[RMDB]
Notes: Structure probing data (2A3 and DMS) for a 207-nucleotide construct. The RNA was probed in 150 mM KOAc, 10 mM MgCl2 and 150 mM bicine (pH 8.5) at 24 C. The 2A3 profile rests on 7,758 reads. It was measured as part of the RMDB library OK3TST.
RNA sequence: GGGAACGACUCGAGUAGAGUCGAAAAUGUGGUAGGUGCUGGACAUGUAUUUGCCUAUUGAUGGAUUCAGUAUCUAUCCAUUCUGUGAAUACUCGCUAAGCACUUACUGUGUGCCAGGCACAGAGUGAUGAGCAAAAACAAGAACAACCCUAGCUCAAGUAUUUACUCCAUUCGUGGAGUAAAUACUAAAAGAAACAACAACAACAAC
Reactivity to 2A3 in 0.01 (KOAc 150mM, MgCl2 10mM, bicine 150mM(pH8.5), 24C), signal-to-noise 8, nucleotides 027 to 156: u130g030u140g010g010u010a000g010g010u000g010c020u010g010g010a030c020a060u110g120u220a140u130u130u180g110c050c050u160a170u100u200g090a090u100g040g060a060u060u060c030a030g040u060a030u000c010u010a010u000c010c000a010u040u000c010u020g060u020g020a100a060u100a140c030u030c080g010c080u100a130a070g020c020a000c000u100u210a080c070u110g020u020g010u030g100c060c070a100g010g070c010a010c010a020g020a010g020u030g020a070u040g020a000g010c030a000a030a030a020a040c090a080a060g070a050a030c040a030a060c020c000c000u030a020g000c010u010c020a010
Reactivity to DMS in 0.01 (KOAc 150mM, MgCl2 10mM, bicine 150mM(pH8.5), 24C), signal-to-noise 3, nucleotides 027 to 156: u000g000u000g040g010u000a010g030g030u000g020c000u000g010g040a050c010a070u000g010u000a070u000u000u010g030c080c090u000a280u000u000g010a080u000g020g020a080u000u000c050a120g030u000a070u000c030u000a040u000c000c010a040u000u000c080u000g030u000g000a040a100u000a040c020u000c090g020c060u000a080a120g010c010a020c020u000u000a080c060u000g020u000g030u000g010c030c130a190g030g000c020a070c020a060g020a120g000u000g000a100u000g000a030g030c010a030a030a100a140a080c070a060a110g010a070a120c020a070a100c010c010c020u010a150g010c020u010c020a160